Description: Chemical mapping of a 177-nucleotide RNA with DMS and 2A3. Reactivities are rounded to 0.1 and cut off at 0 and 3. The 2A3 profile rests on 5,258 reads. For 2A3 the reverse transcriptase was SuperScript II with manganese. Conditions: 150 mM KOAc, 10 mM MgCl2 and 150 mM bicine (pH 8.5), 24 C. The data come from the RNA Mapping Database (RMDB), library TTRDEL. Reactivities are given for positions 27 through 126.
RNA sequence: GGGAACGACUCGAGUAGAGUCGAAAAGAUAUGGACACGGUGGGCGUCGAAGAACUCGGAAACGAGGGAGACGCCACACGUGUCCUAAGUCAAAACGUGACGAAGUCCUUCGGGACUUCGUCACGAACUUGAGAUAUCUGUUCGCAGAUAUCUCAAGAAAAGAAACAACAACAACAAC
Reactivity to DMS in 0.01 (KOAc 150mM, MgCl2 10mM, bicine 150mM(pH8.5), 24C), signal-to-noise 3, nucleotides 027 to 126: g000a040u020a300u000g010g000a030c000a010c000g020g010u010g020g000g000c000g020u010c000g000a080a170g000a150a190c000u000c000g000g000a120a090a170c000g000a010g010g000g000a070g000a010c000g000c000c000a000c010a010c020g000u000g010u010c000c000u010a000a080g000u000c040a080a080a140a210c000g020u000g000a010c000g000a000a000g020u000c000c020u000u020c190g030g020g000a000c000u000u000c000g000u000c000a000c000g010a010a050
Reactivity to 2A3 in 0.01 (KOAc 150mM, MgCl2 10mM, bicine 150mM(pH8.5), 24C), signal-to-noise 1, nucleotides 027 to 126: g020a010u080a060u140g010g000a000c000a020c030g030g020u060g040g210g010c020g020u010c000g070a230a040g010a040a000c000u000c020g030g020a060a050a050c010g010a010g020g030g000a020g000a000c000g010c060c000a010c000a000c000g010u010g000u000c010c010u000a000a000g000u010c020a010a020a060a120c000g010u010g000a000c000g020a000a000g010u000c010c000u040u150c280g030g000g000a010c000u000u000c020g020u000c000a000c000g000a010a000